[RMDB]
RNA sequence: GGGAACGACUCGAGUAGAGUCGAAAAGAAGGAGUUGCAGUGUGUCUGCCUAUCUACACUUGCUGUGCAGAAUAACCUCCAACCUGUACAGCAGGCACAGACAGGCAGAUAGACGUCAGCCUGCCCCCGCUAGCGAUGAGUUCGCUCAUCGCUAGCGAAAAGAAACAACAACAACAAC
Reactivity to DMS in 0.01 (KOAc 150mM, MgCl2 10mM, bicine 150mM(pH8.5), 24C), signal-to-noise 1, nucleotides 027 to 126: g020a080a010g000g000a080g000u060u080g000c130a040g020u020g020u040g010u000c010u030g060c010c000u030a100u000c000u020a120c300a230c000u000u000g030c010u000g000u010g020c010a000g000a090a080u000a050a140c070c060u000c010c110a090a190c190c030u000g000u000a000c010a080g000c010a000g050g000c190a180c300a030g000a000c020a000g000g000c000a000g000a000u020a000g000a100c000g000u030c070a000g000c000c000u000g000c060c000c000c150
Reactivity to 2A3 in 0.01 (KOAc 150mM, MgCl2 10mM, bicine 150mM(pH8.5), 24C), signal-to-noise 3, nucleotides 027 to 126: g040a030a030g070g050a100g040u140u030g040c150a090g020u060g000u000g000u130c000u000g000c000c000u010a020u000c010u010a010c030a010c090u010u010g010c000u010g000u000g000c010a010g030a160a100u170a210a110c040c050u150c050c050a040a070c020c010u010g010u000a000c000a000g000c000a010g000g000c030a000c000a030g000a020c000a000g020g000c000a000g000a000u000a000g030a010c010g030u050c010a000g000c000c000u090g010c000c000c000c010
This 177-nucleotide RNA was probed chemically with DMS and 2A3. For DMS the reverse transcriptase was MarathonRT. The reactions ran in a buffer of 150 mM KOAc, 10 mM MgCl2 and 150 mM bicine (pH 8.5), at 24 C. For 2A3 the reverse transcriptase was SuperScript II with manganese. Source: RMDB library RFM100, as collected in RNAgym.